[RMDB]
RNA sequence: GGGAACGACUCGAGUAGAGUCGAAAAGGCUAUGACGCUACACAGACUGAAUUCGACAGCCUCGGCGAAACGGGUGGUGCUAAGACACACACUCUGACCGUCAACGAAAUGCCUACACACAACCACAUCAUCAAGGGUUAUCAGGGUGUCGAUAACACCAAGUCUUGAACUUCGGUUCAAGACUUGGAAAAGAAACAACAACAACAAC
Reactivity to DMS in 0.01 (KOAc 150mM, MgCl2 10mM, bicine 150mM(pH8.5), 24C), signal-to-noise 1, nucleotides 027 to 156: g040g010c020u000a070u000g000a220c160g000c000u000a120c030a180c030a100g000a080c020u000g040a040a150u000u000c030g070a100c060a100g000c010c000u020c000g000g070c070g070a040a040a040c240g010g030g010u000g000g050u000g050c000u040a140a100g030a040c030a030c000a220c010a050c030u010c030u000g000a040c100c000g000u000c050a080a120c070g000a090a100a080u000g000c000c040u000a050c110a130c020a050c090a100a060c030c030a020c100a050u000c000a130u010c190a120a010g040g010g010u000u000a000u000c030a030g000g000g000u030g000u000c040g000a000u010a090a030c010a130
Reactivity to 2A3 in 0.01 (KOAc 150mM, MgCl2 10mM, bicine 150mM(pH8.5), 24C), signal-to-noise 3, nucleotides 027 to 156: g050g000c040u080a040u230g060a040c070g040c050u100a020c070a000c010a080g080a100c040u150g100a110a160u090u020c000g050a000c010a050g030c010c020u040c030g030g000c010g050a080a050a090c050g000g000g000u000g010g010u030g000c020u120a220a060g270a050c000a000c000a030c000a000c030u020c000u010g000a050c020c010g000u020c030a080a010c030g020a050a000a040u150g000c000c010u100a050c090a010c010a010c000a080a060c060c060a030c020a160u210c030a020u070c030a070a090g050g030g000u050u070a000u100c050a000g000g000g090u040g040u040c020g000a000u030a060a000c030a040
This 207-nucleotide RNA was probed chemically with DMS and 2A3. The data come from the RNA Mapping Database (RMDB), library OK3TST. Conditions: 150 mM KOAc, 10 mM MgCl2 and 150 mM bicine (pH 8.5), 24 C.